Overview:
The record gives the reactivity of an RNA of 207 nucleotides to 2A3 and DMS. It was measured as part of the RMDB library OK3TST. The reactions ran in a buffer of 150 mM KOAc, 10 mM MgCl2 and 150 mM bicine (pH 8.5), at 24 C.
RNA sequence: GGGAACGACUCGAGUAGAGUCGAAAAACUGUGCGAUUAGGCAGCUGCUCCCCUUCUCUGGCCUCAAUGUCCCAUCUAUAAAAUGAAGGGGAUGGGCACGAUGAGUGGUUUUGAAACUAUCUUCAGAGUUUUCAAGAAGUGCUUGUCAGGCAUAGUGCAAUGCGAUAUAGUUCGCUAUAUCGCAUUGAAAAGAAACAACAACAACAAC
Reactivity to 2A3 in 0.01 (KOAc 150mM, MgCl2 10mM, bicine 150mM(pH8.5), 24C), signal-to-noise 8, nucleotides 027 to 156: a000c030u040g010u040g040c040g110a170u080u150a110g050g000c020a030g030c060u120g040c030u090c010c010c000c000u070u010c030u000c030u050g080g020c010c000u080c070a080a140u110g070u100c000c000c000a010u010c030u040a090u080a120a150a070a070u180g080a050a030g060g000g000g000a000u040g000g000g000c040a010c070g050a070u050g010a020g010u050g030g060u050u030u040u060g040a030a020a000c020u030a070u140c050u180u130c130a040g020a020g140u060u040u050u080c010a020a010g040a060a020g070u040g050c020u070u050g020u020c020a020g030g030c010a020u040a040g030u050g030
Reactivity to DMS in 0.01 (KOAc 150mM, MgCl2 10mM, bicine 150mM(pH8.5), 24C), signal-to-noise 5, nucleotides 027 to 156: a020c030u000g020u000g020c050g000a190u000u000a070g000g010c050a070g030c030u000g010c070u000c010c000c000c040u000u000c020u000c050u000g020g010c020c000u010c050a080a090u000g020u010c000c000c010a160u000c040u010a160u000a060a070a100a130u010g010a110a110g030g000g020g010a020u000g000g010g010c030a060c070g010a060u000g010a060g040u000g020g010u000u010u010u000g010a060a030a040c040u000a080u010c120u000u000c120a150g000a080g010u000u000u000u000c040a060a080g020a050a060g010u000g020c010u000u000g020u000c000a120g030g040c020a060u000a070g010u000g020